[RMDB]
RNA sequence: GGGAACGACUCGAGUAGAGUCGAAAAAGCCACCGCUACGGCGGUGGCAAGUAGAAAAGUUGGUGCUUAGACCACGCCCUCUACCGUAAUAAUAGAUAAAUAGGCGAGCAUCAGUACGCUGAUACAAAAAACACUCACACGUUCGCGUGUGAGUGAACAUGACUACAAUGUUCGCAUUGUAGUCAUGAAAAGAAACAACAACAACAAC
Reactivity to DMS in 0.01 (KOAc 150mM, MgCl2 10mM, bicine 150mM(pH8.5), 24C), signal-to-noise 1, nucleotides 027 to 156: a140g000c000c030a010c000c040g090c010u000a040c300g100g080c000g040g090u000g010g030c000a000a010g020u000a110g000a050a070a040a200g040u020u010g000g030u010g000c030u020u000a120g010a090c000c050a100c000g010c000c000c020u000c020u010a010c020c020g000u000a120a120u010a140a190u000a070g020a110u010a010a050a020u020a040g000g050c030g020a040g030c030a000u010c030a060g010u010a080c210g030c030u000g010a050u000a050c010a010a000a100a070a040a100c020a000c000u000c000a000c050a030c010g000u010u000c300g000c040g050u000g010u020g000a000g110u000g030a000a110
Reactivity to 2A3 in 0.01 (KOAc 150mM, MgCl2 10mM, bicine 150mM(pH8.5), 24C), signal-to-noise 3, nucleotides 027 to 156: a000g010c010c000a010c020c000g020c000u040a060c230g130g000c000g000g000u010g000g000c000a000a010g010u010a010g020a030a060a010a020g050u090u020g010g000u070g030c120u160u100a030g030a110c010c010a020c040g000c000c010c010u000c010u000a020c020c060g070u030a090a000u060a160a040u080a140g160a100u130a120a120a050u080a060g030g000c030g040a040g040c020a010u020c030a020g040u040a040c080g010c070u040g070a080u060a180c140a010a110a000a030a000a020c000a000c000u000c000a000c000a000c000g020u080u050c180g030c020g100u010g000u010g000a010g000u000g000a000a010